[RMDB]
RNA sequence: GGGAACGACUCGAGUAGAGUCGAAAACGGGAGGCUGAGGCAGGAGAAUUGCUUGAAACCAGAAGGCAGAGGUUGCAGUGAGCCUAGACUGCACCACUGCACUCCAGCCUGGGCGAAAAGAGCCAAAUCUCCGGGAAAUGUUCGCAUUUCCCGGAGAAAAAGAAACAACAACAACAAC
Reactivity to DMS in 0.01 (KOAc 150mM, MgCl2 10mM, bicine 150mM(pH8.5), 24C), signal-to-noise 1, nucleotides 027 to 126: c090g000g010g000a070g070g060c000u000g000a000g000g000c000a160g010g040a010g000a100a030u000u020g010c000u000u000g000a120a080a140c130c040a070g030a030a040g060g000c010a020g020a000g020g040u030u030g000c000a010g010u000g000a050g060c060c060u000a060g000a080c040u030g050c000a070c120c000a120c010u000g010c040a170c020u000c030c000a030g000c030c000u000g000g020g000c020g000a050a120a180a100g000a070g000c020c050a030a010a150
Reactivity to 2A3 in 0.01 (KOAc 150mM, MgCl2 10mM, bicine 150mM(pH8.5), 24C), signal-to-noise 1, nucleotides 027 to 126: c020g000g020g010a090g010g000c000u090g050a020g120g000c040a030g050g010a060g030a070a200u110u070g010c000u050u000g120a070a000a110c020c000a090g040a070a020g120g000c000a000g000a000g030g060u160u130g000c000a000g000u050g050a030g030c020c020u080a140g060a120c000u000g000c000a020c000c000a020c000u000g000c040a100c060u080c030c000a000g070c000c000u000g000g000g010c050g000a130a000a000a000g100a000g000c020c090a000a030a000
This 177-nucleotide RNA was probed chemically with DMS and 2A3. The reactions ran in a buffer of 150 mM KOAc, 10 mM MgCl2 and 150 mM bicine (pH 8.5), at 24 C.